RNA sequence: GGGAACGACUCGAGUAGAGUCGAAAAAAAGAGGAUCGUCCGGAUUGCCUUUCUCCAUGCGAUCGAUAAAUGAGCGGGGCACACGCAGGGCAAAAAGCUUUUUGGCGCUGCGUCCGGCUAACAGUUAGCCUAUCGACGGCUUCGGCCGUCGAUAGGCAAAAGAAACAACAACAACAAC
Reactivity to 2A3 in 0.01 (KOAc 150mM, MgCl2 10mM, bicine 150mM(pH8.5), 24C), signal-to-noise 1, nucleotides 027 to 126: a020a020a000g100a080g030g000a000u000c000g020u020c090c000g060g030a000u000u170g200c030c000u020u120u040c060u000c000c000a050u110g000c020g290a260u200c190g000a140u170a040a240a030u110g050a020g020c050g030g000g000g050c000a000c000a000c020g000c000a050g080g000g160c000a030a030a030a030a030g150c150u150u240u000u050u140g110g090c090g110c090u000g000c000g000u000c000c020g150g000c020u080a060a000c000a000g140u190u290a000